[RMDB]
RNA sequence: GGGAACGACUCGAGUAGAGUCGAAAAGAGGAUACGAAAAGCUUCGUGCUUUCGAUAGCUUUGUAGCGGCGGCUACGUCCCCUAGGGGAGCCGCCUCCCCUGCUAUCGGCGCGAGGGGAGUAUCCGAAUGCUGCUAUAUCUUCGGAUAUAGCAGCAUAAAAGAAACAACAACAACAAC
Reactivity to DMS in 0.01 (KOAc 150mM, MgCl2 10mM, bicine 150mM(pH8.5), 24C), signal-to-noise 3, nucleotides 027 to 126: g030a240g010g010a010u000a010c000g010a120a100a120a170g000c000u000u000c020g010u000g000c020u000u030u020c070g000a030u000a010g000c000u000u000u010g020u000a080g020c150g010g020c010g000g000c020u010a080c210g000u010c010c000c030c070u000a180g030g000g070g000a090g000c020c030g000c000c000u000c010c020c030c030u010g030c010u000a020u000c030g010g000c010g020c010g000a030g010g020g020g000a220g040u000a010u000c010c000g020a130
Reactivity to 2A3 in 0.01 (KOAc 150mM, MgCl2 10mM, bicine 150mM(pH8.5), 24C), signal-to-noise 2, nucleotides 027 to 126: g130a030g030g000a000u010a000c040g090a060a120a070a160g090c010u010u000c010g030u020g010c030u150u170u220c020g000a000u020a010g010c010u090u070u140g050u140a020g020c020g040g010c000g010g000c010u070a050c130g210u090c000c020c000c020u110a160g000g030g000g010a000g010c020c000g010c000c010u010c000c000c000c000u010g000c000u010a010u040c010g020g000c030g020c010g010a020g000g020g000g000a050g000u000a000u010c000c000g010a010